RNA sequence: GGGAACGACUCGAGUAGAGUCGAAAAGUGCACUAAUUAUGAUCUUUCAAUUAUUAAUGCACGUAUUAAAGCUAAGCACAUUGUCUAUGUAGGAGAUCCAGCACAGUUGCCAGCUCCUAGGACUUUGGAUACUAUGAGCGUUCGCGCUCAUAGUAUCAAAAGAAACAACAACAACAAC
Reactivity to 2A3 in 0.01 (KOAc 150mM, MgCl2 10mM, bicine 150mM(pH8.5), 24C), signal-to-noise 1, nucleotides 027 to 126: g000u020g000c010a000c000u020a000a020u050u080a050u040g000a020u060c070u050u300u060c100a160a130u100u010a010u000u010a060a020u020g010c000a000c000g060u030a070u010u210a130a040a050g050c120u060a050a030g060c030a050c010a130u000u090g010u000c020u040a050u190g170u010a030g040g010a020g010a040u060c060c000a010g000c020a030c020a130g090u170u080g020c020c050a000g020c000u010c000c000u000a030g000g030a010c000u000u000u010g000
Reactivity to DMS in 0.01 (KOAc 150mM, MgCl2 10mM, bicine 150mM(pH8.5), 24C), signal-to-noise 2, nucleotides 027 to 126: g030u000g000c000a020c010u000a020a010u000u000a080u020g010a090u020c170u010u010u020c060a090a080u010u000a040u010u000a010a000u020g010c010a020c000g040u010a090u020u010a080a040a080g020c060u010a100a110g000c090a180c070a030u010u000g010u000c030u000a040u010g020u010a010g010g000a080g010a070u000c080c120a050g010c070a030c210a120g000u010u010g000c000c050a110g010c000u000c000c000u000a080g010g000a050c010u010u010u000g020
Background: This 177-nucleotide RNA was probed chemically with 2A3 and DMS. The RNA was probed in 150 mM KOAc, 10 mM MgCl2 and 150 mM bicine (pH 8.5) at 24 C. For DMS the reverse transcriptase was MarathonRT. For 2A3 the reverse transcriptase was SuperScript II with manganese. Values cover nucleotides 27 to 126.